[RMDB]
RNA sequence: GGGAACGACUCGAGUAGAGUCGAAAAGUGUUAGCGUUCGCGCUAACACAAAGAAGGCUGCAACGCGCAGCGCGCUCGCGAGAGCACGAAAGAGCGUUAUAAAAAGCUCGGGCUUCGGCCCGAGCAACCCAUAAUAAACGUUCGCGUUUAUUAUGGGAAAAGAAACAACAACAACAAC
Reactivity to DMS in 0.01 (KOAc 150mM, MgCl2 10mM, bicine 150mM(pH8.5), 24C), signal-to-noise 5, nucleotides 027 to 126: g010u000g000u000u000a000g010c000g020u000u010c250g040c010g030c000u000a010a010c000a000c000a040a070a110g010a140a140g000g010c020u000g000c070a090a040c080g010c050g000c030a050g010c010g010c050g010c010u000c000g000c300g000a230g010a010g010c000a030c040g010a050a070a100g010a070g010c000g000u000u000a120u000a060a100a120a160a120g020c000u000c000g000g010g010c000u000u020c260g040g000c000c000c000g000a000g010c000a010a020
Reactivity to 2A3 in 0.01 (KOAc 150mM, MgCl2 10mM, bicine 150mM(pH8.5), 24C), signal-to-noise 4, nucleotides 027 to 126: g000u000g000u000u000a010g000c020g010u030u050c270g000c000g000c110u000a000a000c000a010c000a000a010a000g060a060a020g150g000c020u030g010c050a220a090c160g040c030g000c090a000g000c010g000c000g010c000u000c000g000c030g020a060g000a010g130c050a030c100g090a110a120a030g060a010g000c000g000u060u070a190u140a190a180a050a020a020g000c010u010c000g020g000g010c020u060u080c300g120g000c000c010c030g010a000g000c000a000a000

Structure probing data (DMS and 2A3) for a 177-nucleotide construct. Conditions: 150 mM KOAc, 10 mM MgCl2 and 150 mM bicine (pH 8.5), 24 C. Source: RMDB library M2PK50, as collected in RNAgym. For 2A3, 6,049 sequencing reads were counted. For DMS the reverse transcriptase was MarathonRT.